[RMDB]
RNA sequence: GGGAACGACUCGAGUAGAGUCGAAAACUAGGGGGCACACCCGCUUACCAAACCUUAUCAAACUCCGAAUACCGUGCAAUGGAACGUGGCAGUGAGACAGUGGGGGAUAAGCUUCAUUGUCGAGAGGUUCAAUGAUAACUUUCGAGUUAUCAUUGAAAAAAGAAACAACAACAACAAC
Reactivity to 2A3 in 0.01 (KOAc 150mM, MgCl2 10mM, bicine 150mM(pH8.5), 24C), signal-to-noise 9, nucleotides 027 to 126: c040u060a050g020g000g000g030g010c030a020c010a050c050c010c010g020c030u030u050a060c010c000a080a040a030c000c010u080u090a070u150c040a060a060a030c030u020c020c010g050a080a030u060a150c010c020g030u040g080c040a060a100u130g020g020a070a030c040g020u070g020g000c010a030g030u020g070a040g010a020c000a010g000u020g010g000g010g000g040a090u080a250a040g030c000u020u010c000a020u010u030g010u020c020g010a010g000a020g120g000
Reactivity to DMS in 0.01 (KOAc 150mM, MgCl2 10mM, bicine 150mM(pH8.5), 24C), signal-to-noise 9, nucleotides 027 to 126: c060u010a090g010g010g020g000g020c090a060c090a120c070c030c030g010c070u000u010a100c070c030a050a090a090c070c010u010u010a070u010c070a070a120a100c060u010c030c020g010a100a080u020a080c060c030g000u010g010c100a090a090u030g000g000a070a070c110g010u010g000g010c050a050g010u010g000a140g000a010c010a020g010u000g000g000g000g010g000a100u020a060a110g010c020u000u000c010a040u010u000g010u000c010g000a100g010a070g010g010